[RMDB]
The data come from the RNA Mapping Database (RMDB), library TTRINS. This 177-nucleotide RNA was probed chemically with DMS. The RNA was probed in 150 mM KOAc, 10 mM MgCl2 and 150 mM bicine (pH 8.5) at 24 C.
RNA sequence: GGGAACGACUCGAGUAGAGUCGAAAAGAUAUGGAUCUCUCUCCCCACCUUGUCAAUCACGACGAAGGAGAGAACUCGGAAACGAGUUCUCUCCAGAGUGAUUCCCAAGAGGAGAGAUCCUAAGUCAGGAUUAUCUAUUGUUCGCAAUAGAUAAUCCAAAAGAAACAACAACAACAAC
Reactivity to DMS in 0.01 (KOAc 150mM, MgCl2 10mM, bicine 150mM(pH8.5), 24C), signal-to-noise 2, nucleotides 027 to 126: g010a030u000a090u000g000g000a000u000c010u000c000u000c010u000c050c030c000c050a300c050c010u000u000g010u000c140a040a020u000c010a020c000g000a220c240g000a150a130g010g010a010g010a030g000a010a000c010u000c000g010g000a060a030a090c010g000a010g010u000u000c000u000c000u000c000c000a000g010a030g000u010g000a010u000u010c040c050c000a010a020g000a210g010g000a020g000a020g000a000u000c020c010u000a000a090g020u000c040a140